This 177-nucleotide RNA was probed chemically with DMS and 2A3. The data come from the RNA Mapping Database (RMDB), libraries RFM100 and RFMREP. The reactions ran in a buffer of 150 mM KOAc, 10 mM MgCl2 and 150 mM bicine (pH 8.5), at 24 C. In probing experiments dimethyl sulfate is read out at A N1 and C N3, which are open when not base-paired.
RNA sequence: GGGAACGACUCGAGUAGAGUCGAAAACUUGAUCGUCCGAGAGGGGGCCAAGUGGCUUCGCUUUGAUCUUAAAAUUGCUGCUCCAAAGGGAAGACUUGAAGAGAGAAACACCUGUGAUUAACGACCACUGACUCUAGAAAUUCGUUUCUAGAGUCAGAAAAGAAACAACAACAACAAC
Reactivity to DMS in 0.01 (KOAc 150mM, MgCl2 10mM, bicine 150mM(pH8.5), 24C), signal-to-noise 5, nucleotides 027 to 126: c030u000u000g000a050u010c040g010u000c030c040g020a110g010a150g010g000g010g000g000c060c030a080a070g020u010g010g010c040u000u010c030g000c030u000u000u020g000a060u010c050u000u030a060a070a070a090u010u010g010c030u000g000c030u000c030c040a030a080a060g000g000g010a070a070g000a100c040u000u020g020a090a110g000a140g010a080g010a090a060a060c110a060c040c030u000g010u010g010a080u010u020a050a060c080g000a100c150c140a140
Reactivity to 2A3 in 0.01 (KOAc 150mM, MgCl2 10mM, bicine 150mM(pH8.5), 24C), signal-to-noise 9, nucleotides 027 to 126: c010u020u050g030a020u080c050g060u010c050c040g070a070g040a060g120g050g010g020g020c020c010a120a050g070u090g070g010c000u040u030c030g040c060u030u040u080g050a070u040c000u060u130a060a100a120a120u130u110g020c020u020g020c010u020c050c020a050a030a040g080g020g020a080a040g040a070c020u030u060g060a150a020g050a020g010a010g020a070a070a000c030a020c010c020u030g020u030g050a030u050u070a070a040c030g020a020c020c000a030